About this RNA: This 177-nucleotide RNA was probed chemically with 2A3.
RNA sequence: GGGAACGACUCGAGUAGAGUCGAAAAUAUCACAAACAGUUCGGGUUAUCUUUUCCUUCCCCAACUAUCGUCAUUUCAGCAGAAUAUAAUAAGUAUUGAUACUCUGUCAUUACCUGCUGAUUAUGAAGAGCCACAAACAGUUCGCUGUUUGUGGCUCAAAAGAAACAACAACAACAAC
Reactivity to 2A3 in 0.01 (KOAc 150mM, MgCl2 10mM, bicine 150mM(pH8.5), 24C), signal-to-noise 3, nucleotides 027 to 126: u120a050u060c050a040c090a070a080a030c090a050g060u120u110c030g000g010g000u150u040a170u240c090u100u070u000u080c070c000u040u150c040c020c000c040a050a060c010u080a080u290c080g090u040c010a040u020u000u000c010a010g000c000a000g030a140a050u290a000u000a170a140u150a170a010g030u020a070u050u040g020a030u110a190c080u100c170u300g060u070c000a000u000u000a030c010c000u000g000c000u000g020a020u070u000a040u040g020a000a030
Conditions: 150 mM KOAc, 10 mM MgCl2 and 150 mM bicine (pH 8.5), 24 C.